[RMDB]
RNA sequence: GGGAACGACUCGAGUAGAGUCGAAAAGAAUUGUCCACUAUUGAAUCCUUGAUGAACUUGUAUCAACAGCUAGGAGAGGUUGCACCCUACAUGGUAAUUCUCGAGAACUCAAUUCAGAACAAGUUUACCAUAAGAAAGCGUUCGCGCUUUCUUAUGGAAAAGAAACAACAACAACAAC
Reactivity to DMS in 0.01 (KOAc 150mM, MgCl2 10mM, bicine 150mM(pH8.5), 24C), signal-to-noise 3, nucleotides 027 to 126: g000a070a110u010u010g000u010c030c030a190c120u000a110u000u010g000a100a100u000c030c000u000u010g020a110u010g010a070a060c110u000u010g010u000a110u000c070a040a070c080a050g010c110u000a080g000g000a160g010a060g030g030u010u000g000c140a080c060c040c050u000a070c120a070u010g010g000u010a020a060u010u000c010u000c050g000a130g000a050a050c060u010c040a030a080u020u000c110a090g010a070a050c060a030a090g000u000u000u000a180
Reactivity to 2A3 in 0.01 (KOAc 150mM, MgCl2 10mM, bicine 150mM(pH8.5), 24C), signal-to-noise 2, nucleotides 027 to 126: g070a030a060u090u060g050u020c020c030a040c110u090a070u150u120g060a050a050u000c000c030u100u120g020a090u050g020a060a030c020u080u030g020u090a130u100c030a020a060c000a060g030c040u050a010g040g050a040g050a030g000g040u050u090g040c010a000c010c030c010u050a050c040a080u050g060g000u050a040a040u050u030c030u010c040g110a100g020a080a020c010u020c080a020a090u170u080c050a070g070a080a030c040a050a020g030u010u030u050a060

The record gives the reactivity of an RNA of 177 nucleotides to DMS and 2A3. It was measured as part of the RMDB library OK2TRN. DMS adducts were read by reverse transcription with MarathonRT. The DMS profile rests on 1,564 reads.